[RMDB]
RNA sequence: GGGAACGACUCGAGUAGAGUCGAAAAGCCAUAUAUCCCGUGACAUUGCGAAAGCAAGGCUGGCGGUAGGUAGUCCUGGGCGGCGACAGCCUUGGACUGCGGCGUAAAGGUGUACCUGGGGCCGUUAUAACGCGGUAACAGUUCGCUGUUACCGCAAGAUCUAGUAGUAGUUCGCUACUACUAGAUCAAAAGAAACAACAACAACAAC
Reactivity to DMS in 0.01 (KOAc 150mM, MgCl2 10mM, bicine 150mM(pH8.5), 24C), signal-to-noise 2, nucleotides 027 to 156: g020c020c040a110u000a100u010a090u010c030c010c000g020u000g030a090c050a070u010u000g000c030g010a160a140a230g000c020a040a010g020g040c020u020g000g020c040g010g000u000a070g030g020u010a040g000u000c000c000u030g000g000g020c010g000g010c080g000a100c090a140g030c020c020u000u000g000g000a010c030u000g020c030g030g030c030g010u000a060a080a060g010g010u010g060u000a100c040c040u000g030g040g020g040c050c000g010u000u010a080u010a120a190c170g000c010g020g000u000a010a030c010a020g010u000u020c240g020c020u000g000u000u010a000c000c000g050c000a010a020
Reactivity to 2A3 in 0.01 (KOAc 150mM, MgCl2 10mM, bicine 150mM(pH8.5), 24C), signal-to-noise 3, nucleotides 027 to 156: g010c000c000a020u050a000u020a000u160c000c000c010g050u060g030a050c070a110u040u090g010c010g070a150a060a040g030c040a030a010g030g030c060u040g070g010c020g000g000u050a050g000g080u050a010g020u000c020c010u010g000g000g000c000g000g050c070g090a060c070a010g000c000c000u010u020g010g000a010c010u020g010c020g020g000c020g010u080a100a070a010g000g000u050g030u130a100c020c020u040g000g000g050g000c020c000g020u040u040a120u030a190a040c080g010c000g000g010u000a010a000c000a020g020u100u140c180g040c120u000g000u000u000a010c010c000g000c000a000a000
This 207-nucleotide RNA was probed chemically with DMS and 2A3. The RNA was probed in 150 mM KOAc, 10 mM MgCl2 and 150 mM bicine (pH 8.5) at 24 C.